Record summary: Structure probing data (2A3 and DMS) for a 177-nucleotide construct. Reactivities are rounded to 0.1 and cut off at 0 and 3. Reactivities are given for positions 27 through 126. For DMS the reverse transcriptase was MarathonRT. The data come from the RNA Mapping Database (RMDB), library OK2TST. For 2A3 the reverse transcriptase was SuperScript II with manganese. 2A3 is a SHAPE reagent: it acylates the 2'-hydroxyl of flexible nucleotides of all four kinds.

RNA sequence: GGGAACGACUCGAGUAGAGUCGAAAAAUGGUGAUCCGUGUGCUUUUUGUGCCAUGCUUGCUACGAGGUCGGAUUAUACGACCAAAGAAAGGGCGCUCACUACUGGUCAUACGCGGCGUCAUAAGCGCCUUGCGCUUUACUUCGGUAAAGCGCAAGGAAAAGAAACAACAACAACAAC
Reactivity to 2A3 in 0.01 (KOAc 150mM, MgCl2 10mM, bicine 150mM(pH8.5), 24C), signal-to-noise 2, nucleotides 027 to 126: a010u130g030g000u030g020a050u030c030c000g000u020g010u020g040c020u050u100u020u140u130g030u020g000c030c000a090u130g050c030u050u050g000c010u050a060c030g060a060g000g020u020c030g010g000a010u090u100a040u120a080c010g010a010c000c030a050a080a010g070a040a070a010g030g000g000c040g030c010u010c010a050c030u110a030c030u060g030g030u060c020a030u030a110c040g030c030g030g010c020g000u030c020a040u010a140a070g050c020g000
Reactivity to DMS in 0.01 (KOAc 150mM, MgCl2 10mM, bicine 150mM(pH8.5), 24C), signal-to-noise 3, nucleotides 027 to 126: a090u000g010g000u000g000a040u000c030c060g030u010g010u000g020c120u000u000u000u000u000g000u010g020c120c050a110u000g000c040u000u000g000c160u000a070c080g000a300g000g000u000c000g030g000a240u010u020a110u000a170c010g010a030c000c000a020a100a080g020a060a070a150g000g000g020c030g000c070u000c070a040c050u000a060c060u000g010g000u020c060a130u000a060c100g020c120g000g020c040g010u000c040a060u020a070a150g000c130g000

Conditions: 150 mM KOAc, 10 mM MgCl2 and 150 mM bicine (pH 8.5), 24 C.